[RMDB]
RNA sequence: GGGAACGACUCGAGUAGAGUCGAAAAAUCAACGACCCGCAGACAUUACGUUAUGCCACCAUCGUUUCUUAUGCGAAUGGCGCGGGGGCUAUGUUGCGGACUUUUUCAUCAGAUAAACGUCUGGCAAGACGUCAUGACCAUUCGUGGUCAUGACGUCAAAAGAAACAACAACAACAAC
Reactivity to 2A3 in 0.01 (KOAc 150mM, MgCl2 10mM, bicine 150mM(pH8.5), 24C), signal-to-noise 1, nucleotides 027 to 126: a020u090c020a010a090c080g090a060c010c000c010g000c020a010g010a070c030a050u100u300a040c150g060u000u070a100u190g030c000c000a050c000c000a060u040c060g000u030u160u000c080u140u170a140u230g010c000g090a170a020u050g000g050c020g000c000g020g010g000g000g000c010u030a000u210g080u000u000g070c020g000g090a060c040u110u100u040u050u050c100a160u070c030a050g000a040u120a100a070a040c110g010u020c000u060g090g000c020a000a060
Reactivity to DMS in 0.01 (KOAc 150mM, MgCl2 10mM, bicine 150mM(pH8.5), 24C), signal-to-noise 2, nucleotides 027 to 126: a080u010c090a030a140c080g000a130c020c000c010g050c050a200g020a020c050a020u000u010a070c180g000u000u010a090u000g020c020c000a190c050c120a090u000c120g020u000u000u000c070u010u010a030u010g000c040g010a120a040u000g020g010c190g000c020g010g000g000g050g030c060u000a100u000g000u000u010g020c030g000g020a030c070u010u020u010u010u000c030a160u020c160a100g000a030u000a020a070a070c160g000u000c020u030g000g040c120a070a080
Description:
Chemical mapping of a 177-nucleotide RNA with 2A3 and DMS. The data come from the RNA Mapping Database (RMDB), library OK2TST. The RNA was probed in 150 mM KOAc, 10 mM MgCl2 and 150 mM bicine (pH 8.5) at 24 C. For 2A3, 752 sequencing reads were counted. For DMS the reverse transcriptase was MarathonRT.